[RMDB]
RNA sequence: GGGAACGACUCGAGUAGAGUCGAAAAUACAUGAUGAGAACACUGAAGCUUAGGUUAAAUGAUUGUCCAAAUCGGACAAUCAUUUUCAAAAUCUCCCCCUUUUUUUCUCCUUUCUUAUCUGCAAGGCCAUAUUUCGAUGAUUCGUCAUCGAAAUAUGAAAAGAAACAACAACAACAAC
Reactivity to DMS in 0.01 (KOAc 150mM, MgCl2 10mM, bicine 150mM(pH8.5), 24C), signal-to-noise 4, nucleotides 027 to 126: u010a120c080a070u010g020a050u010g010a060g010a050a050c200a110c140u000g000a090a050g000c090u000u010a040g010g020u000u000a030a020a000u000g010a010u010u000g000u000c000c000a050a120a120u010c240g010g000a020c000a000a000u000c000a000u000u000u000u010c120a060a050a120a090u000c090u000c040c030c010c010c020u000u000u000u010u020u010u000c020u010c040c110u000u000u000c010u000u000a040u010c050u000g020c100a040a080g010g020c250
Reactivity to 2A3 in 0.01 (KOAc 150mM, MgCl2 10mM, bicine 150mM(pH8.5), 24C), signal-to-noise 2, nucleotides 027 to 126: u100a010c060a070u110g020a040u040g020a060g020a080a020c070a010c110u050g060a100a030g040c060u050u080a030g030g080u070u060a000a000a000u000g000a000u000u000g010u000c010c000a090a130a300u260c080g000g020a000c010a000a000u010c000a000u010u000u010u020c010a000a000a000a050u030c030u020c000c000c000c030c060u000u090u080u110u070u020u030c060u070c010c030u040u080u030c010u020u070a090u020c060u030g000c020a020a010g030g010c000